[RMDB]
RNA sequence: GGGAACGACUCGAGUAGAGUCGAAAAUCCUUUCUCGAUAGAGAUUGGAGUCAUACAAGCCCAGAAACCAUUCCUUAUACCUUGAGUAUUGCUGAAUUCAGUUUAGCGUGCAUGCUCUUGGCUAUUCAUACCAAGGACAACUUCGGUUGUCCUUGAACAGUCCAUGUAAGUUCGCUUACAUGGACUGAAAAGAAACAACAACAACAAC
Reactivity to DMS in 0.01 (KOAc 150mM, MgCl2 10mM, bicine 150mM(pH8.5), 24C), signal-to-noise 3, nucleotides 027 to 156: u000c010c000u010u000u000c000u000c030g010a300u010a170g000a010g010a040u000u000g000g020a050g040u000c120a160u010a120c070a090a150g000c020c010c020a130g000a160a160a130c090c040a200u000u010c010c020u000u000a140u000a050c020c010u010u000g000a040g030u010a020u010u010g000c030u000g010a090a120u000u000c100a200g030u010u000u000a040g020c090g050u000g030c170a130u000g010c000u020c000u000u000g000g000c070u020a080u000u020c070a160u000a110c100c040a020a010g000g010a020c010a010a010c020u000u010c290g050g010u000u010g010u000c000c010u000u000g000a060a160
Reactivity to 2A3 in 0.01 (KOAc 150mM, MgCl2 10mM, bicine 150mM(pH8.5), 24C), signal-to-noise 5, nucleotides 027 to 156: u000c010c000u000u000u000c080u020c030g200a300u220a260g000a000g000a000u000u000g010g010a020g020u040c020a020u080a220c070a040a070g030c000c000c010a010g100a060a070a020c090c040a130u100u190c030c030u110u150a030u010a140c010c000u000u020g000a000g030u010a030u150u120g010c010u040g040a140a140u160u160c060a090g160u060u090u130a060g020c090g030u020g010c020a000u020g000c000u000c000u000u000g000g000c010u060a010u030u140c060a080u090a210c090c030a010a000g000g000a000c000a010a000c000u060u090c150g050g000u010u000g000u000c000c000u000u000g010a000a000

Conditions: 150 mM KOAc, 10 mM MgCl2 and 150 mM bicine (pH 8.5), 24 C. Chemical mapping of a 207-nucleotide RNA with DMS and 2A3. Reactivities are given for positions 27 through 156. For 2A3 the reverse transcriptase was SuperScript II with manganese. DMS adducts were read by reverse transcription with MarathonRT. For 2A3, 2,787 sequencing reads were counted.